[RMDB]
RNA sequence: GGGAACGACUCGAGUAGAGUCGAAAAGGGUAGUGAGCGGCUCCAAGGCUUCCAUUAGCCACAGUAUGUUUAAAGACUGUGCUUGCUGUAUUAUGCUUGGGGGACAGGGCACUAUCGCACAUAGUCAUUUUAUGGCGACCACUUGCACUGAUACACCCGGGGAGAAACAUUUCGAUGUUUCUCCCCGAAAAGAAACAACAACAACAAC
Reactivity to 2A3 in 0.01 (KOAc 150mM, MgCl2 10mM, bicine 150mM(pH8.5), 24C), signal-to-noise 2, nucleotides 027 to 156: g050g020g200u000a020g010u020g050a050g080c040g050g040c070u030c010c060a030a020g100g030c000u060u000c080c000a070u080u050a020g000c000c010a010c000a010g020u020a020u100g180u090u200u190a100a120a020g050a000c000u000g020u020g070c080u090u100g000c010u030g040u090a190u120u060a070u280g010c020u030u030g020g000g010g000g050a060c060a140g030g070g000c040a000c070u050a010u040c040g010c020a100c010a100u070a010g100u090c070a120u080u150u000u150a030u020g030g020c010g010a050c020c020a030c030u010u110g050c050a040c070u010g010a070u090a130c050a040c060c020

Record summary
Chemical mapping of a 207-nucleotide RNA with 2A3. For 2A3, 863 sequencing reads were counted. The data come from the RNA Mapping Database (RMDB), library OK3TST. Conditions: 150 mM KOAc, 10 mM MgCl2 and 150 mM bicine (pH 8.5), 24 C.